RNA sequence: GGGAACGACUCGAGUAGAGUCGAAAAAGUGGACGAUACAUUACACCGAGCAAUUAAAUUACAGUCCACGCUCGGUCAUUAUUCUGGCGAGAGCCAGUUCACAGACAGCUAGCGAAAGGAAGGACCUAGCAGGAAGGAAGGCGCUAGCGCUAGGACAAAUACUGCAUGCAUUCGUGCAUGCAGUAUUAAAAGAAACAACAACAACAAC
Reactivity to 2A3 in 0.01 (KOAc 150mM, MgCl2 10mM, bicine 150mM(pH8.5), 24C), signal-to-noise 2, nucleotides 027 to 156: a000g030u030g010g000a040c010g020a100u140a130c070a110u060u200a060c040a020c060c000g000a000g000c020a040a150u140u090a260a090a090u200u210a110c030a080g010u040c010c010a000c010g000c000u000c000g000g020u020c020a050u020u300a040u080u000c020u030g000g000c020g020a010g000a010g040c000c000a000g020u060u060c020a010c040a070g100a030c050a010g010c010u010a000g010c040g120a110a050a020g110g000a040a060g020g020a030c000c000u020a020g000c000a010g080g050a050a010g020g010a050a000g060g000c010g020c040u030a020g000c020g000c000u040a030g000g080a000c040a010
Reactivity to DMS in 0.01 (KOAc 150mM, MgCl2 10mM, bicine 150mM(pH8.5), 24C), signal-to-noise 1, nucleotides 027 to 156: a040g060u010g010g000a060c030g030a300u030a030c110a100u000u000a040c080a040c050c000g040a110g000c000a210a280u000u000a060a130a140u010u000a120c070a140g000u010c000c010a060c010g010c000u000c030g000g030u020c050a020u010u000a120u000u000c080u000g010g000c000g030a300g050a300g030c000c000a050g010u000u000c040a100c020a220g000a030c030a180g020c040u010a040g000c000g010a080a050a050g000g090a060a140g050g010a110c110c040u000a100g000c040a080g000g010a080a030g000g020a060a040g010g000c040g000c060u000a000g000c020g040c040u000a030g000g000a110c030a140
Source information:
An RNA of 207 nucleotides, treated with 2A3 and DMS and read out base by base. Reactivities are given for positions 27 through 156. The 2A3 profile rests on 1,028 reads. Source: RMDB library OK3TST, as collected in RNAgym. For 2A3 the reverse transcriptase was SuperScript II with manganese.